[RMDB]
Overview
Chemical mapping of a 207-nucleotide RNA with DMS and 2A3. The data come from the RNA Mapping Database (RMDB), library OK3TST. For 2A3, 1,404 sequencing reads were counted.

RNA sequence: GGGAACGACUCGAGUAGAGUCGAAAAGAAACACUAAACUUGAAAGAUUAUUAGUUUUAGCAAUUGAGGAAGCGGUUAUGACAGAGCUUGUUGAAUAUGAUGCAUUAGAUAAAUACAACCACUUAGAACAACAGUUAUUAAACAAUGAAGCAUUAACCACCUUUAACUUUUUCGAAAGUUAAAGGUGAAAAGAAACAACAACAACAAC
Reactivity to DMS in 0.01 (KOAc 150mM, MgCl2 10mM, bicine 150mM(pH8.5), 24C), signal-to-noise 2, nucleotides 027 to 156: g020a190a070a090c030a060c040u000a030a090a060c050u000u000g030a160a080a230g010a240u030u000a150u010u010a040g000u000u000u010u000a040g000c020a070a100u010u020g020a110g000g000a080a050g020c040g040g040u000u000a060u010g010a180c040a100g010a070g030c020u000u000g000u000u000g000a070a110u010a070u010g020a050u000g000c030a100u010u000a080g000a120u020a020a060a160u000a050c040a090a070c070c020a070c040u000u000a090g000a090a060c050a050a090c050a040g000u010u010a050u020u000a070a070a070c070a020a070u000g000a050a070g010c030a080u000u000a050a250c100
Reactivity to 2A3 in 0.01 (KOAc 150mM, MgCl2 10mM, bicine 150mM(pH8.5), 24C), signal-to-noise 2, nucleotides 027 to 156: g010a000a020a010c060a010c020u050a010a050a000c010u110u110g080a100a150a020g040a090u220u150a070u130u060a190g030u010u010u040u120a040g000c090a070a060u040u080g010a050g000g000a060a000g030c060g060g000u060u050a060u080g030a010c030a050g050a010g030c020u040u060g030u050u050g020a040a040u100a040u110g020a030u040g000c010a030u020u070a020g030a080u040a080a090a030u140a040c020a010a020c020c040a010c060u020u060a030g060a100a000c020a000a000c000a040g060u040u050a040u070u130a120a060a000c030a030a090u130g060a050a010g010c020a020u000u130a010a000c030